An RNA of 207 nucleotides, treated with 2A3 and read out base by base.
The reactions ran in a buffer of 150 mM KOAc, 10 mM MgCl2 and 150 mM bicine (pH 8.5), at 24 C.
The 2A3 profile rests on 2,140 reads.
RNA sequence: GGGAACGACUCGAGUAGAGUCGAAAACGCGAUGGAUACGUCCAUCGCGAAUCCGUCCAAGCCGCGGACGUUAAACUGUGGCACGGUUGUGCCUAGGUGCAACCCUGCUACGGAUGGCGGCACCCCUGCCCAAGCUACCGUCUACGGACGGUAGCAACCUCCUCAUUACGUUCGCGUAAUGAGGAGGAAAAGAAACAACAACAACAAC
Reactivity to 2A3 in 0.01 (KOAc 150mM, MgCl2 10mM, bicine 150mM(pH8.5), 24C), signal-to-noise 2, nucleotides 027 to 156: c020g000c000g000a030u010g010g030a030u040a030c270g130u020c010c010a010u000c000g000c000g010a010a000u050c020c000g000u000c000c000a040a020g000c000c010g010c000g000g000a010c000g000u010u030a020a030a050c020u020g000u010g020g000c000a000c020g000g000u000u000g010u000g010c020c040u160a260g070g060u000g010c000a000a010c000c000c000u000g010c000u000a000c020g020g000a040u030g080g000c000g000g010c000a050c000c000c000c000u110g000c020c020c030a000a040g020c000u010a000c000c000g010u000c000u010a040c300g100g000a000c000g010g000u000a000g000c000a000a000